Structure probing data (2A3 and DMS) for a 177-nucleotide construct. The data come from the RNA Mapping Database (RMDB), library OK2TRN. For 2A3, 951 sequencing reads were counted. For DMS, 966 sequencing reads were counted.

RNA sequence: GGGAACGACUCGAGUAGAGUCGAAAAUCGGUAACACCCGAAGCCGGUGGCCCAACCCCUUGUGGGAGGGAGCUGUCGAAGGUGGGACUGGCGAUUGGGACGAAGUCGUAACAAGGUAGCCGUACCGACGAGGUACGCUGUUCGCAGCGUACCUCGUAAAAGAAACAACAACAACAAC
Reactivity to 2A3 in 0.01 (KOAc 150mM, MgCl2 10mM, bicine 150mM(pH8.5), 24C), signal-to-noise 2, nucleotides 027 to 126: u020c010g020g000u020a030a020c010a030c010c030c040g000a020a010g040c100c010g080g090u080g050g170c010c000c020a090a300c050c000c000c060u060u300g110u300g000g000g000a030g060g010g000a050g000c000u010g010u020c050g010a000a000g000g000u080g010g000g130a080c060u060g010g000c010g090a030u060u070g050g050g000a010c060g110a300a030g220u240c010g000u050a030a070c030a080a030g110g090u080a030g110c040c010g030u010a060c030c010g020
Reactivity to DMS in 0.01 (KOAc 150mM, MgCl2 10mM, bicine 150mM(pH8.5), 24C), signal-to-noise 2, nucleotides 027 to 126: u010c000g020g000u000a050a120c010a060c060c010c020g000a160a170g000c140c030g000g020u000g000g010c010c000c010a150a150c000c000c020c110u010u000g060u040g030g020g000a270g010g010g000a300g010c010u000g000u000c000g000a120a110g000g030u000g010g000g000a040c060u000g000g010c000g000a160u010u000g000g000g000a050c010g010a200a060g000u010c030g010u050a060a040c080a080a020g000g010u010a120g000c050c040g030u000a030c020c000g020